[RMDB]
RNA sequence: GGGAACGACUCGAGUAGAGUCGAAAACAGAUUGUAGACUGCGUCUUUUUUGACUAUCGUGCUGCCCUUAGGGAGUUUCUCCUCAACCUCGCAUCGUGGUGCGAUAAGAGGGAAACAGUCAAGGCUAUGACCCCAUGUUAUUCGUAACAUGGGGUCAAAAAGAAACAACAACAACAAC
Reactivity to DMS in 0.01 (KOAc 150mM, MgCl2 10mM, bicine 150mM(pH8.5), 24C), signal-to-noise 2, nucleotides 027 to 126: c050a130g000a090u060u000g000u010a140g020a190c140u020g000c300g000u000c030u060u000u020u000u000u000g000a100c070u020a070u060c080g000u010g000c040u000g000c010c080c020u000u000a130g020g000g000a120g000u000u000u000c030u080c010c000u000c010a000a100c250c230u000c000g050c030a010u000c070g000u020g020g020u000g000c000g000a000u000a010a150g000a030g020g000g010a000a000a000c020a130g030u000c030a090a110g010g000c020u010a080
Reactivity to 2A3 in 0.01 (KOAc 150mM, MgCl2 10mM, bicine 150mM(pH8.5), 24C), signal-to-noise 2, nucleotides 027 to 126: c060a010g100a110u130u140g070u060a040g040a150c070u090g020c030g080u020c000u060u010u100u030u100u020g060a030c010u050a110u070c060g070u120g020c030u070g000c010c020c050u040u000a090g050g070g020a080g010u020u000u020c100u060c010c000u020c000a000a010c010c010u020c000g000c000a040u010c070g160u220g260g000u020g010c000g000a020u010a030a050g020a010g000g010g010a000a000a000c010a000g070u040c020a000a030g140g040c040u070a130
The record gives the reactivity of an RNA of 177 nucleotides to DMS and 2A3. The data come from the RNA Mapping Database (RMDB), library OK1LIB. For 2A3, 1,074 sequencing reads were counted. Reactivities are given for positions 27 through 126.